[RMDB]
Chemical mapping of a 177-nucleotide RNA with DMS. The DMS profile rests on 755 reads. The RNA was probed in 150 mM KOAc, 10 mM MgCl2 and 150 mM bicine (pH 8.5) at 24 C.

RNA sequence: GGGAACGACUCGAGUAGAGUCGAAAAUGUGCACAAGUAAGCGUCGAAAAGCGAGAAUCUGAAACUGCAGUUUGUUCAGCAGUAGCUUGCCAAGAGGGGAUGUCAAGUGUGGAACGAAACGAAUCAAUGAUUAGUGCUCGUUCGCGAGCACUAAUCAAAAAGAAACAACAACAACAAC
Reactivity to DMS in 0.01 (KOAc 150mM, MgCl2 10mM, bicine 150mM(pH8.5), 24C), signal-to-noise 1, nucleotides 027 to 126: u010g010u000g040c010a050c070a070a180g000u020a110a120g010c080g000u010c040g050a030a030a070a070g010c030g010a120g010a070a090u020c120u000g050a100a060a050c070u010g030c020a070g020u000u000u000g010u010u020c050a060g010c020a050g000u000a210g010c060u000u000g000c000c060a070a070g010a080g030g020g000g000a100u020g000u000c020a000a090g000u020g050u030g000g050a010a040c080g020a050a050a080c130g010a070a190u000c190a100a080
It was measured as part of the RMDB library OK2TST.